[RMDB]
RNA sequence: GGGAACGACUCGAGUAGAGUCGAAAAAGAUCAAGGUGCUGGCAGAUUCCGUGUUUGGUAAGGGCUUAAUACCUGGUUCAGAGGUGGCACCUUCUAGCUGUGUCCUUAUGUGGUGGAAGGAGUAAAGCAGGUCUCUGGUGCCUUUUUGGAGUCCUAAUCUAUGUAUCUAGUUCGCUAGAUACAUAGAAAAAGAAACAACAACAACAAC
Reactivity to DMS in 0.01 (KOAc 150mM, MgCl2 10mM, bicine 150mM(pH8.5), 24C), signal-to-noise 3, nucleotides 027 to 156: a100g010a070u000c040a040a080g020g030u000g010c030u000g000g020c040a070g020a150u010u000c000c030g030u000g010u010u000u010g000g020u010a070a090g020g020g020c020u000u010a090a150u010a060c020c020u010g010g020u000u000c040a080g010a080g030g020u000g000g060c040a060c030c010u000u010c030u000a100g020c020u000g010u020g010u010c040c030u000u000a070u000g020u000g010g030u000g020g000a070a060g000g010a110g020u000a050a070a110g000c040a060g010g010u000c010u000c040u000g010g030u000g010c020c040u000u000u000u000u000g000g000a170g020u000c040c010u000a060a300
Reactivity to 2A3 in 0.01 (KOAc 150mM, MgCl2 10mM, bicine 150mM(pH8.5), 24C), signal-to-noise 3, nucleotides 027 to 156: a010g030a050u080c060a040a030g040g010u040g030c020u030g060g020c050a020g020a120u090u070c020c030g030u070g050u090u100u070g070g010u060a060a070g020g010g000c000u030u060a060a030u060a120c010c020u010g000g030u050u100c060a060g010a030g090g040u050g030g000c020a050c020c000u030u030c030u030a040g000c010u010g040u020g030u120c010c010u070u060a100u180g050u050g030g030u020g010g010a020a020g000g020a040g030u150a060a060a020g030c040a030g020g050u030c030u010c020u080g020g010u030g000c000c000u010u060u010u040u060g070g010a040g020u030c010c010u030a040a040
Structure probing data (DMS and 2A3) for a 207-nucleotide construct.
The reactions ran in a buffer of 150 mM KOAc, 10 mM MgCl2 and 150 mM bicine (pH 8.5), at 24 C.
The data come from the RNA Mapping Database (RMDB), library OK3TST.
Values cover nucleotides 27 to 156.